[RMDB]
RNA sequence: GGGAACGACUCGAGUAGAGUCGAAAAACAUAGGCCAUGCUUACGAGCAUGGCCUAUGACGAAUCUCAAGCAAUCAAGCAUUCUACUUCUAUUGCAACACUGAGGAGCUUACGAACUCCUCAGUGAAAAAAGAGAGUAAUGUUCGCAUUACUCUCAAGAGAUCAAGUUAGUUCGCUAACUUGAUCUCAAAAGAAACAACAACAACAAC
Reactivity to 2A3 in 0.01 (KOAc 150mM, MgCl2 10mM, bicine 150mM(pH8.5), 24C), signal-to-noise 4, nucleotides 027 to 156: a000c000a000u000a000g010g000c010c010a010u000g020c010u120u050a100c290g100a030g010c000a000u000g010g010c000c000u000a000u000g000a010c000g040a060a080u010c020u010c050a030a030g000c010a000a040u090c020a060a040g020c020a120u220u000c030u150a040c040u070u070c040u090a040u040u030g030c040a080a020c000a040c010u000g000a000g000g010a010g010c020u190u180a070c150g100a100a020c010u000c000c010u000c000a000g000u000g000a020a000a000a000a000a000g000a000g000a000g000u000a000a010u000g010u030u050c120g000c070a000u000u000a000c020u000c000u000c010a000a000
Reactivity to DMS in 0.01 (KOAc 150mM, MgCl2 10mM, bicine 150mM(pH8.5), 24C), signal-to-noise 1, nucleotides 027 to 156: a090c000a000u000a000g000g030c020c020a020u000g000c010u000u000a100c300g080a150g020c020a050u000g000g000c000c020u000a000u000g010a070c000g000a080a090u000c010u000c030a170a100g020c070a070a100u000c100a120a100g000c030a090u000u020c050u000a030c030u000u010c120u010a070u010u000g010c000a250a170c000a000c000u020g000a000g030g010a030g000c020u020u000a150c260g010a090a040c010u000c000c010u000c010a000g010u010g000a010a110a050a080a080a080g000a010g000a020g010u010a020a010u030g000u000u010c300g030c000a030u000u000a010c000u010c000u000c000a000a070